[RMDB]
RNA sequence: GGGAACGACUCGAGUAGAGUCGAAAAGUCAUCUGCGCGUCGUACGGCCACUGAGUACACAUACGAUGAGUACACGGUACAGAGUCGGAUCGCAUGCAGGCCGGAUCCUGAUCGUACGUACCUAGACCGAUGUCAAGGGCUUCGGCCCUUGACAUCGAAAAGAAACAACAACAACAAC
Reactivity to 2A3 in 0.01 (KOAc 150mM, MgCl2 10mM, bicine 150mM(pH8.5), 24C), signal-to-noise 2, nucleotides 027 to 126: g050u010c000a100u020c040u070g000c040g000c000g090u050c020g070u040a060c060g000g000c020c000a010c060u010g030a010g090u050a000c050a000c010a070u050a150c070g190a160u080g050a030g030u020a010c130a020c090g010g030u050a050c000a020g050a030g080u000c060g030g050a070u060c020g000c090a080u220g050c000a030g010g050c000c040g070g000a080u030c000c000u050g040a060u060c020g050u120a080c070g010u040a060c000c000u020a050g060a020c000
Reactivity to DMS in 0.01 (KOAc 150mM, MgCl2 10mM, bicine 150mM(pH8.5), 24C), signal-to-noise 1, nucleotides 027 to 126: g030u010c050a130u010c030u020g000c050g020c110g010u000c040g040u000a110c110g000g030c040c060a070c120u000g010a120g060u000a070c120a060c090a100u000a100c050g000a060u000g020a160g000u000a010c050a100c080g000g040u000a030c050a080g010a150g000u010c030g000g000a050u020c060g000c140a050u000g030c090a050g030g010c090c020g010g000a030u000c010c000u000g000a080u000c030g010u000a050c080g010u030a090c020c000u000a150g000a100c110